Structure probing data (DMS and 2A3) for a 177-nucleotide construct.
Source: RMDB libraries RFM100 and RFMREP, as collected in RNAgym.
For DMS the reverse transcriptase was MarathonRT.
2A3 adducts were read by reverse transcription with SuperScript II with manganese.
Conditions: 150 mM KOAc, 10 mM MgCl2 and 150 mM bicine (pH 8.5), 24 C.
RNA sequence: GGGAACGACUCGAGUAGAGUCGAAAAAGCUCCGUACGCGGAGCAAGCGCUCUGACCUGAGACCUCUGGGUUCUGAGCUGUGAUGUUGCUUCCAAGCUGGGAUCUCUGGGGUCUUGGUUCAGGGUAAUGUAUUAUCUCUAUUCGUAGAGAUAAUACAAAAAGAAACAACAACAACAAC
Reactivity to DMS in 0.01 (KOAc 150mM, MgCl2 10mM, bicine 150mM(pH8.5), 24C), signal-to-noise 6, nucleotides 027 to 126: a100g020c000u000c000c000g020u010a080c220g030c010g010g000a020g010c010a020a030g010c150g010c000u000c000u000g010a020c020c000u000g000a010g000a010c010c010u000c000u000g000g010g000u000u000c010u010g000a020g010c000u000g020u020g010a050u010g010u020u010g010c180u010u000c020c050a080a080g010c000u000g000g000g000a010u000c000u010c050u000g000g000g000g010u000c000u000u000g000g000u000u000c010a010g000g000g010u000a030a050
Reactivity to 2A3 in 0.01 (KOAc 150mM, MgCl2 10mM, bicine 150mM(pH8.5), 24C), signal-to-noise 9, nucleotides 027 to 126: a000g000c000u010c000c000g020u030a030c280g000c010g100g010a000g000c010a010a010g110c050g000c000u000c000u000g000a000c000c000u000g010a000g000a010c000c010u010c010u030g010g000g010u020u000c010u070g210a010g000c000u010g120u070g010a060u040g060u300u210g100c160u110u000c020c010a030a010g000c000u030g010g000g010a010u010c070u000c030u060g010g010g000g020u000c000u000u000g000g000u010u000c000a000g010g000g000u020a040a050